[RMDB]
An RNA of 177 nucleotides, treated with 2A3 and DMS and read out base by base. The DMS profile rests on 1,055 reads. The 2A3 profile rests on 1,369 reads.
RNA sequence: GGGAACGACUCGAGUAGAGUCGAAAAAACAGACCAAAUAAGCCAAACAUAUCGUUGCUUGAACUGUAAUGAUUGGUGAAAUUGAGAUUCUCAUUCGCAAACUGAUAAGUAUUUGGCAUGAGUUCAACCCUACUGCUCAUUUCGAUGAGCAGUAGGGAAAAGAAACAACAACAACAAC
Reactivity to 2A3 in 0.01 (KOAc 150mM, MgCl2 10mM, bicine 150mM(pH8.5), 24C), signal-to-noise 2, nucleotides 027 to 126: a000a000c090a030g060a020c020c000a000a050a090u080a070a020g010c000c020a000a070a020c050a090u180a020u070c020g000u000u000g030c030u130u120g080a140a090c050u060g020u110a020a120u060g020a000u010u060g030g030u090g060a020a080a090u130u110g010a020g000a150u160u030c030u000c030a070u050u030c040g000c110a000a000a210c100u090g010a070u090a240a090g060u040a120u010u010u040g050g000c060a030u070g000a020g000u040u060c010a010a120
Reactivity to DMS in 0.01 (KOAc 150mM, MgCl2 10mM, bicine 150mM(pH8.5), 24C), signal-to-noise 2, nucleotides 027 to 126: a130a080c130a090g000a190c040c040a030a120a100u000a110a140g000c000c000a010a020a080c030a120u000a030u020c060g000u000u010g000c080u000u010g020a030a040c090u010g040u000a020a060u000g030a040u000u000g000g020u000g020a030a050a130u020u030g000a070g010a130u000u010c030u000c000a070u010u030c060g000c030a040a090a010c040u020g000a150u020a100a020g010u020a120u010u000u020g000g050c080a050u020g000a050g010u010u030c050a040a130